[RMDB]
Chemical mapping of a 177-nucleotide RNA with DMS and 2A3. The RNA was probed in 150 mM KOAc, 10 mM MgCl2 and 150 mM bicine (pH 8.5) at 24 C.
RNA sequence: GGGAACGACUCGAGUAGAGUCGAAAAGAAGCUGCAAGCAAGCGAUGAUCCGGGGAUAUCCGAAUGGGGUAACCUGAUCGAGGCAAUACUCGAUCGUUCAUACCUGAAUACAUAGGGUAUGAAACGCCGUACCAGUGUUCUUCGGAACACUGGUACGAAAAGAAACAACAACAACAAC
Reactivity to DMS in 0.01 (KOAc 150mM, MgCl2 10mM, bicine 150mM(pH8.5), 24C), signal-to-noise 3, nucleotides 027 to 126: g010a120a100g040c010u010g000c070a130a100g060c080a130a050g000c030g000a090u010g010a090u000c020c050g020g020g000g060a200u030a010u050c000c020g000a070a080u060g030g000g000g020u020a050a090c010c020u030g000a030u000c010g000a070g000g040c020a060a130u070a060c000u000c010g010a040u000c000g000u000u000c020a010u000a010c010c000u010g000a110a150u010a180c170a010u000a260g010g000g000u000a010u000g000a040a030a100c150g040c100
Reactivity to 2A3 in 0.01 (KOAc 150mM, MgCl2 10mM, bicine 150mM(pH8.5), 24C), signal-to-noise 5, nucleotides 027 to 126: g080a040a040g000c040u080g000c100a060a120g010c050a100a040g010c050g060a030u060g000a010u020c050c040g020g000g000g020a070u020a010u100c050c040g070a180a240u260g020g000g000g030u030a050a080c010c000u010g000a000u010c000g020a020g000g000c040a050a030u030a120c000u000c020g010a010u010c010g000u000u000c010a000u000a000c000c000u060g010a040a020u090a070c030a020u050a050g000g000g000u000a010u010g030a030a040a010c070g020c030